Annotation:
The record gives the reactivity of an RNA of 177 nucleotides to 2A3 and DMS. The 2A3 profile rests on 2,434 reads. It was measured as part of the RMDB library M2PK90. Reactivities are given for positions 27 through 126. For DMS the reverse transcriptase was MarathonRT.

RNA sequence: GGGAACGACUCGAGUAGAGUCGAAAAACAAAUUAUCUAAGUCUAAGACCUUGUUUCGCGCUAACAAGGAAAAAUGGAGGAAGACCAGACCUCCAUACUUAGACUAGCGCGAACCGGCCAAAAAAAAGAUGUCAUAAUUGUUCGCAAUUAUGACAUCAAAAGAAACAACAACAACAAC
Reactivity to 2A3 in 0.01 (KOAc 150mM, MgCl2 10mM, bicine 150mM(pH8.5), 24C), signal-to-noise 2, nucleotides 027 to 126: a000c090a060a030a030u250u180a070u140c030u060a090a000g010u000c020u020a010a070g000a050c010c000u010u010g060u000u050u080c050g010c000g010c030u020a020a010c010a000a000g000g000a050a070a000a040a000u020g000g000a010g040g040a140a060g110a150c060c030a020g060a120c000c020u000c010c000a000u000a000c000u000u010a000g060a030c010u010a010g000c030g010c020g010a010a040c040c020g060g100c050c040a170a080a010a000a000a000a020a050
Reactivity to DMS in 0.01 (KOAc 150mM, MgCl2 10mM, bicine 150mM(pH8.5), 24C), signal-to-noise 2, nucleotides 027 to 126: a160c070a080a030a070u010u010a060u010c050u010a050a030g010u000c060u010a040a040g010a300c010c010u000u000g000u010u000u000c060g030c030g020c020u010a080a040c060a010a020g000g010a010a000a090a050a010u010g000g010a000g000g010a120a050g010a160c160c130a100g010a050c010c000u010c010c000a000u000a010c000u000u000a020g010a050c100u000a010g030c080g000c000g010a060a030c050c060g020g030c070c020a000a020a000a040a120a020a050a080